[RMDB]
Source: RMDB library OK2TST, as collected in RNAgym. Chemical mapping of a 177-nucleotide RNA with DMS. For DMS the reverse transcriptase was MarathonRT.

RNA sequence: GGGAACGACUCGAGUAGAGUCGAAAAAGAGAUCAGACGACCAAACAGUAGGCUGCGGCUCCCAGCACAGGGGGAUUCGCUUUCACUACCCCUGGCACAGGGGUCUUUUCUGAGGGGUCUCGACAUACUGAGCAUGGAAAUUCGUUUCCAUGCUCAGAAAAGAAACAACAACAACAAC
Reactivity to DMS in 0.01 (KOAc 150mM, MgCl2 10mM, bicine 150mM(pH8.5), 24C), signal-to-noise 1, nucleotides 027 to 126: a070g020a110g000a060u010c010a050g020a150c220g000a120c040c030a060a100a060c130a060g040u000a060g010g000c120u040g010c180g000g020c020u020c010c000c040a110g020c090a070c200a060g010g000g000g000g000a060u010u010c070g020c090u000u010u030c120a170c110u000a160c010c000c010c050u000g000g010c110a150c240a110g000g000g010g010u000c020u020u020u010u010c010u000g010a140g030g010g000g000u030c020u000c000g000a040c200a070u000a220